The record gives the reactivity of an RNA of 177 nucleotides to 2A3 and DMS. It was measured as part of the RMDB library TTRDES. DMS adducts were read by reverse transcription with MarathonRT. For DMS, 1,287 sequencing reads were counted. The RNA was probed in 150 mM KOAc, 10 mM MgCl2 and 150 mM bicine (pH 8.5) at 24 C. 2A3 adducts were read by reverse transcription with SuperScript II with manganese.
RNA sequence: GGGAACGACUCGAGUAGAGUCGAAAAAGAUAUGGAGAGUCUUGAGUUAUCCUCUCCCGAUGAAAUCGAUCGGAAACGAUCGAUGGAGGGAACGUGAGGAUAACAAUGAUGGACUCUCCUAAGUCAAGAUGCCAUCAUAGUUCGCUAUGAUGGCAUCAAAAGAAACAACAACAACAAC
Reactivity to 2A3 in 0.01 (KOAc 150mM, MgCl2 10mM, bicine 150mM(pH8.5), 24C), signal-to-noise 2, nucleotides 027 to 126: a000g020a050u070a020u160g010g000a000g010a000g020u020c020u020u060g060a030g000u020u030a000u000c010c010u000c020u050c000c010c000g300a300u050g040a040a000a000u000c010g020a000u030c020g000g060a100a050a070c030g000a010u020c000g000a000u000g000g000a000g000g010g030a070a050c190g250u270g010a000g000g000a000u000a000a000c000a030a250u140g030a020u070g000g000a030c000u000c000u000c000c030u020a070a000g070u000c020a000a090
Reactivity to DMS in 0.01 (KOAc 150mM, MgCl2 10mM, bicine 150mM(pH8.5), 24C), signal-to-noise 2, nucleotides 027 to 126: a090g010a030u020a300u010g000g000a030g000a020g000u000c000u020u000g000a140g010u000u000a000u000c000c000u000c010u000c010c020c000g000a110u000g000a130a150a010u000c000g010a020u000c000g020g010a250a180a140c000g030a000u000c000g000a020u000g000g010a080g000g000g000a150a080c300g020u020g000a020g000g000a010u000a010a010c000a190a070u010g020a170u000g010g010a000c010u010c000u010c000c000u010a010a080g000u000c070a170a130